[RMDB]
RNA sequence: GGGAACGACUCGAGUAGAGUCGAAAAUGGAAGAAGGGAGACUGACAAUGCUCGGAGAGGUCGGACUCGAUGCAAGUGCCAGGCUGAGGUGGCCCAUUGAGGCGAGGCAUGUCUGGGAGGAGAUGAAUAGUCAGGCGAACAGUCAGGCGAACAGUCGACUCCUAUAUGCAUUCGUGCAUAUAGGAGUAAAAGAAACAACAACAACAAC
Reactivity to DMS in 0.01 (KOAc 150mM, MgCl2 10mM, bicine 150mM(pH8.5), 24C), signal-to-noise 2, nucleotides 027 to 156: u000g000g110a050a080g000a050a120g000g010g000a090g000a130c060u010g020a110c080a100a110u010g000c030u020c010g000g000a080g000a060g010g020u010c100g030g010a130c020u010c030g000a060u000g020c050a080a100g000u010g020c000c040a070g020g000c040u010g010a130g020g020u000g010g000c030c010c070a140u000u020g000a060g040g010c060g020a110g000g000c070a060u010g020u010c020u000g000g000g020a070g030g010a090g010a110u010g020a090a090u000a080g030u010c040a060g040g000c000g020a050a060c040a100g000u010c010a050g050g040c030g010a050a070c070a100g010u000c030g010
Reactivity to 2A3 in 0.01 (KOAc 150mM, MgCl2 10mM, bicine 150mM(pH8.5), 24C), signal-to-noise 4, nucleotides 027 to 156: u100g020g020a010a040g020a030a030g050g030g020a070g010a050c040u030g020a040c070a040a140u130g010c030u050c060g050g010a050g000a020g020g040u060c050g050g040a060c010u010c050g040a040u080g040c070a080a050g030u040g100c010c030a010g060g010c030u070g030a050g060g050u050g030g000c000c000c010a060u060u140g000a070g010g030c030g010a030g000g000c050a030u080g060u010c060u030g010g000g000a030g010g000a040g010a040u070g050a070a020u050a040g020u050c050a020g030g000c020g020a040a030c010a040g060u090c040a000g050g000c060g020a080a040c020a030g060u060c010g070